[RMDB]
RNA sequence: GGGAACGACUCGAGUAGAGUCGAAAAGAGGUACGUUAAAAGCAGUUCUAGGCAAAAUUGCAGAUAAGAGGUGCGUUAAAAGCAGUUCUCAGUAAAAUUGCUGAUAAGGGGUAAGUUAAAAGCAAUCCGUCCGUAUUGGAUUCGUCCAAUACGGACGAAAAGAAACAACAACAACAAC
Reactivity to DMS in 0.01 (KOAc 150mM, MgCl2 10mM, bicine 150mM(pH8.5), 24C), signal-to-noise 2, nucleotides 027 to 126: g000a010g020g010u010a000c030g060u010u030a080a040a140a120g040c030a010g060u030u010c030u000a090g000g000c000a020a060a110a040u000u020g010c000a020g000a160u030a060a050g000a010g020g030u000g000c020g000u000u140a090a030a160a140g020c030a040g010u000u000c020u000c060a080g000u010a010a010a050a090u000u000g000c010u000g000a060u050a040a090g050g010g000g000u010a000a050g000u000u000a030a060a090a090g020c100a040a080u010c110
Reactivity to 2A3 in 0.01 (KOAc 150mM, MgCl2 10mM, bicine 150mM(pH8.5), 24C), signal-to-noise 2, nucleotides 027 to 126: g120a010g170g010u040a040c090g070u010u110a040a010a040a030g040c000a020g080u110u110c050u100a040g010g000c000a020a080a130a300u120u000g000c000a020g030a180u250a250a000g040a000g000g010u000g000c000g000u090u080a050a190a000a030g020c000a000g030u130u000c080u000c020a000g020u050a000a000a000a170u050u070g000c010u000g020a040u020a170a070g030g000g000g020u060a090a050g000u030u230a000a120a060a000g100c050a020a100u000c020
Conditions: 150 mM KOAc, 10 mM MgCl2 and 150 mM bicine (pH 8.5), 24 C. The record gives the reactivity of an RNA of 177 nucleotides to DMS and 2A3. 2A3 is a SHAPE reagent: it acylates the 2'-hydroxyl of flexible nucleotides of all four kinds. The 2A3 profile rests on 816 reads. Source: RMDB library OK1LIB, as collected in RNAgym.